[RMDB]
RNA sequence: GGGAACGACUCGAGUAGAGUCGAAAAACGUUGUAUCUAGACGUGGAGAUCUAGAAACACUUGGAUAUUGUAUGAUUAGAUGGUUGGGAGGUAUCUUGCCAUGGACUAAGAUAUCUGAAACAAAGAAUUGUGCAUUAGUAAGUGCCACAAAACAGAACCCAUAGUUGUCCUUCGGGACAACUAUGGGAAAAGAAACAACAACAACAAC
Reactivity to 2A3 in 0.01 (KOAc 150mM, MgCl2 10mM, bicine 150mM(pH8.5), 24C), signal-to-noise 1, nucleotides 027 to 156: a020c120g000u030u020g030u010a090u020c010u010a030g010a050c000g030u150g040g150a060g010a030u020c030u030a010g040a050a070a000c050a000c010u140u020g030g020a080u000a010u090u010g090u020a050u030g030a030u040u040a150g050a130u030g100g070u090u030g050g040g000a030g000g000u000a010u040c030u000u020g060c010c000a030u070g080g040a090c020u100a100a050g010a040u080a030u050c010u020g070a040a020a000c050a000a120a050g060a050a030u020u000g000u010g000c000a000u000u060a020g120u090a230a020g000u010g000c050c000a060c020a010a100a000a010c010a010g030a090a060
Record summary: This 207-nucleotide RNA was probed chemically with 2A3. Source: RMDB library OK3TST, as collected in RNAgym.